[RMDB]
RNA sequence: GGGAACGACUCGAGUAGAGUCGAAAACUCAUUCUUCAACACCAGCCUUCUGUGCAGGCUACCCUACCCAUCAAGACGCCGCGGGAUACGAGUGUAUGUUUUGUAGGACACUUGCAGGUAAGUAAUAUCAUCUCGCCAGAUUCGUCUGGCGAGAUGAAAAAGAAACAACAACAACAAC
Reactivity to 2A3 in 0.01 (KOAc 150mM, MgCl2 10mM, bicine 150mM(pH8.5), 24C), signal-to-noise 2, nucleotides 027 to 126: c020u040c040a100u090u020c040u120u110c020a030a040c010a000c110c050a010g040c000c000u030u050c080u080g150u050g000c000a050g010g050c020u060a050c010c000c000u040a050c010c030c000a050u050c050a000a040g060a090c020g000c060c070g100c000g030g000g100a040u010a130c040g040a020g020u030g010u060a010u060g120u010u050u060u000g150u010a080g080g060a000c050a020c060u090u050g000c050a020g070g000u120a170a030g050u020a040a050u050a010
Reactivity to DMS in 0.01 (KOAc 150mM, MgCl2 10mM, bicine 150mM(pH8.5), 24C), signal-to-noise 1, nucleotides 027 to 126: c040u040c030a010u000u010c000u000u000c150a040a070c040a130c130c000a120g000c080c060u000u120c030u020g000u000g000c060a150g070g120c030u000a000c000c000c040u000a070c160c000c000a020u010c050a130a050g020a130c080g000c000c000g020c070g000g010g000a150u010a000c150g170a110g060u000g020u000a110u010g050u000u000u000u000g000u040a140g020g000a200c070a000c060u000u000g000c220a170g000g010u050a040a060g000u010a020a100u000a000